The record gives the reactivity of an RNA of 177 nucleotides to 2A3 and DMS.
For 2A3 the reverse transcriptase was SuperScript II with manganese.
For DMS the reverse transcriptase was MarathonRT.
It was measured as part of the RMDB library OK1LIB.
The reactions ran in a buffer of 150 mM KOAc, 10 mM MgCl2 and 150 mM bicine (pH 8.5), at 24 C.

RNA sequence: GGGAACGACUCGAGUAGAGUCGAAAAGGGUCGUGGACAGUGGCAGGUCCACCAUAUGUGAAACAUUUGGACACCAUGGGACCCCGAGUAGAGUGCGGCUCUAUCAUGAUGAGCGGCUCCAUCAAUAGGCUGGUUACUGCUUCGGCAGUGGCCAGCCAAAAGAAACAACAACAACAAC
Reactivity to 2A3 in 0.01 (KOAc 150mM, MgCl2 10mM, bicine 150mM(pH8.5), 24C), signal-to-noise 4, nucleotides 027 to 126: g050g000g010u020c010g050u090g050g030a040c040a060g030u090g020g060c080a060g150g000u030c000c000a000c000c000a100u080a010u100g100u030g160a120a100a040c010a020u060u040u050g000g010a000c030a020c040c030a040u040g060g040g050a040c010c010c000c000g020a000g030u130a020g100a070g060u300g300c030g070g000c000u000c000u010a030u050c100a080u140g140a010u050g000a010g000c030g010g000c030u000c030c010a050u070c080a030a170u040a130
Reactivity to DMS in 0.01 (KOAc 150mM, MgCl2 10mM, bicine 150mM(pH8.5), 24C), signal-to-noise 3, nucleotides 027 to 126: g000g000g000u010c020g020u020g020g010a060c010a100g000u000g000g030c300a060g000g020u000c000c010a280c280c000a010u000a010u000g000u050g000a070a120a300c030a040u010u010u000g010g000a080c070a140c020c120a080u010g010g010g000a080c030c000c000c070g010a080g000u010a050g000a060g020u020g010c040g020g000c000u000c000u020a060u030c220a090u000g000a070u020g000a030g010c020g000g000c030u000c040c040a080u020c080a040a110u010a180